[RMDB]
RNA sequence: GGGAACGACUCGAGUAGAGUCGAAAAACAACAGAUAGCUGGAACCAGCGUAGAAUUCUACGCAUAUCCAUAGCGAAUGGUACCUGUAAAGAAAAUAAUGAGGUAUGUACAAGUACCAACAGGCCUCAAUGCCAUGGUGAUGUCAAUCACAUAUGCAUAAUUUAAUGCGAUUCGUCGCAUUAAAUUAAAAAGAAACAACAACAACAAC
Reactivity to 2A3 in 0.01 (KOAc 150mM, MgCl2 10mM, bicine 150mM(pH8.5), 24C), signal-to-noise 9, nucleotides 027 to 156: a000c040a020a010c010a040g120a150u130a050g020c010u010g050g010a130a170c080c040a060g000c010g010u010a010g050a180a280u300u110c000u000a000c000g010c010a010u040a010u080c010c010a040u120a030g010c010g060a060a040u050g030g000u030a020c010c000u020g030u090a040a120a060g130a060a120a030a030u220a020a120u110g010a030g030g000u040a030u070g020u010a030c030a080a050g020u010a030c010c000a020a030c010a030g040g040c000c020u020c010a020a040u040g010c030c020a020u040g010g040u010g010a020u040g130u190c120a060a020u010c000a020c010a020u120a030u100g000c010a030
Reactivity to DMS in 0.01 (KOAc 150mM, MgCl2 10mM, bicine 150mM(pH8.5), 24C), signal-to-noise 5, nucleotides 027 to 156: a070c030a090a090c050a090g020a160u000a090g030c010u010g030g020a080a110c180c060a160g010c010g020u000a020g010a250a180u000u000c010u000a020c010g020c000a140u000a110u020c040c030a120u010a050g020c010g020a140a120u000g010g010u000a010c010c010u000g010u000a070a080a140g000a090a080a090a130u010a070a100u000g030a100g040g020u000a040u000g020u000a070c050a030a040g020u000a020c000c000a060a080c080a120g010g020c030c020u030c050a070a100u000g010c010c040a060u000g010g010u010g010a090u000g010u000c190a070a080u010c030a050c030a040u000a050u010g010c050a190
Chemical mapping of a 207-nucleotide RNA with 2A3 and DMS. DMS adducts were read by reverse transcription with MarathonRT. Reactivities are given for positions 27 through 156. 2A3 adducts were read by reverse transcription with SuperScript II with manganese. High 2A3 reactivity points to a flexible backbone, as in loops and unpaired stretches. For DMS, 12,377 sequencing reads were counted. The data come from the RNA Mapping Database (RMDB), library OK3TST.